RNA sequence: GGGAACGACUCGAGUAGAGUCGAAAAACCGUUCAUUCACGUAAUUGGUAUUUACAUCUGUUUGAUAAGACAAUGUUGUGAAGCUACCACGUGUUGGAUUAUGGCUGAACGCCUCUAAGUCAGAAUCCUGUAAUGAUGGCUUCGGCCAUCAUUACAGAAAAGAAACAACAACAACAAC
Reactivity to DMS in 0.01 (KOAc 150mM, MgCl2 10mM, bicine 150mM(pH8.5), 24C), signal-to-noise 3, nucleotides 027 to 126: a140c030c010g030u010u010c040a110u010u020c030a010c020g020u000a120a140u030u010g020g030u000a070u010u000u000a000c010a020u000c030u010g010u000u010u010g010a150u050a150a060g000a020c010a010a090u020g010u000u020g000u000g010a010a020g010c100u010a010c120c050a030c110g010u010g000u000u000g000g000a020u000u000a030u010g010g010c000u000g000a100a110c160g000c030c020u000c040u010a170a060g000u000c030a040g010a080a050u010c020
Reactivity to 2A3 in 0.01 (KOAc 150mM, MgCl2 10mM, bicine 150mM(pH8.5), 24C), signal-to-noise 4, nucleotides 027 to 126: a010c020c030g010u070u050c040a070u090u070c000a000c020g060u030a220a090u100u130g010g020u020a160u010u070u010a010c010a030u020c000u030g180u050u090u060g300a260u230a190a040g020a030c020a050a140u140g010u060u000g000u000g010a040a080g010c070u050a010c000c000a010c010g030u000g000u020u010g000g000a010u000u060a070u250g000g010c000u000g060a070a000c040g050c000c000u000c020u030a070a030g030u030c030a060g020a020a080u010c010